[RMDB]
RNA sequence: GGGAACGACUCGAGUAGAGUCGAAAAAGUGCACUAGGUACGCCUAGUGCACAUUCCAGGACAUACUGCUGAGGAUGUCAAAAAUGCAGUUGGAGUCCUCAACUGGAUAGGUUACGGCCUAUCCAGAAAAAGACUUGGUUGUUCGCAACCAAGUCAACUAAGUAGUUUAGUUCGCUAAACUACUUAGAAAAGAAACAACAACAACAAC
Reactivity to 2A3 in 0.01 (KOAc 150mM, MgCl2 10mM, bicine 150mM(pH8.5), 24C), signal-to-noise 3, nucleotides 027 to 156: a000g010u000g010c010a000c000u000a000g010g010u040a020c210g120c020c000u000a000g010u000g000c000a000c000a000u000u000c000c010a000g010g000a010c020a040u190a010c020u020g020c020u050g010a080g170g120a300u280g260u300c170a070a080a020a000a010u180g000c010a000g000u030u050g090g070a090g010u000c000c020u050c020a040a110c010u000g000g000a000u000a000g000g020u040u040a050c210g130g000c000c000u000a000u000c000c000a000g000a000a000a000a000a000g000a000c000u000u000g020g000u010u000g020u040u110c240g010c070a000a000c000c000a000a000g000u010c000a000a000
Reactivity to DMS in 0.01 (KOAc 150mM, MgCl2 10mM, bicine 150mM(pH8.5), 24C), signal-to-noise 3, nucleotides 027 to 156: a140g010u000g000c000a020c020u000a000g000g010u010a060c300g040c040c000u010a020g020u000g000c000a000c010a010u000u010c040c020a210g020g000a090c030a070u000a050c000u010g000c080u010g010a130g020g020a100u000g000u010c030a030a060a070a120a150u010g000c030a140g010u000u000g010g010a200g000u000c010c020u000c030a030a170c010u000g000g010a020u000a000g010g010u000u000a100c270g040g000c010c000u000a000u000c000c000a020g000a010a050a070a130a120g010a010c010u000u000g020g020u000u000g020u000u000c300g020c020a020a020c000c010a000a010g010u000c000a020a060